Chemical mapping of a 207-nucleotide RNA with DMS and 2A3.

[RMDB]
RNA sequence: GGGAACGACUCGAGUAGAGUCGAAAAGCCAUGAGUCACAACGCAAAGCCGCGGCAAGUGGAGUUAGCGAGAAGAGACUAGGCUUUGGUUUCUUCAAGUGAAGCGGUCACCAAUCAGGUGUGGUAGUAGGAGCCUGCAUGGUUCGCCAUGCAGGCAACAGUACCAAAUGGUUCGCCAUUUGGUACUGAAAAGAAACAACAACAACAAC
Reactivity to DMS in 0.01 (KOAc 150mM, MgCl2 10mM, bicine 150mM(pH8.5), 24C), signal-to-noise 2, nucleotides 027 to 156: g000c020c010a060u000g030a300g000u000c020a040c060a070a100c040g000c040a160a090a190g010c010c030g030c020g010g020c040a080a270g030u000g000g000a100g010u000u010a240g010c000g020a290g010a100a070g000a070g010a050c020u000a040g040g030c090u010u010u000g010g010u000u000u000c000u000u000c030a080a300g020u010g000a100a080g020c030g000g030u000c040a070c060c020a060a090u010c060a090g010g010u000g030u010g000g020u000a050g000u010a080g000g000a170g000c000c000u000g000c000a010u020g010g020u000u010c300g000c020c000a020u000g000c030a000g000g040c000a010a000
Reactivity to 2A3 in 0.01 (KOAc 150mM, MgCl2 10mM, bicine 150mM(pH8.5), 24C), signal-to-noise 3, nucleotides 027 to 156: g000c000c030a090u130g070a030g080u080c030a000c040a160a060c080g030c030a090a090a000g020c050c010g030c030g000g060c070a100a070g020u100g040g070a100g030u140u150a020g020c030g000a030g010a050a030g040a010g010a010c000u010a070g060g060c000u140u100u050g000g000u020u010u010c000u010u010c030a080a060g010u040g120a110a000g030c000g020g030u030c030a020c030c030a040a090u200c070a060g000g030u050g030u060g080g060u030a080g000u020a060g100g120a020g020c000c010u000g000c010a000u000g010g000u040u030c050g050c080c000a000u000g000c000a000g000g020c000a000a000
The DMS profile rests on 3,571 reads.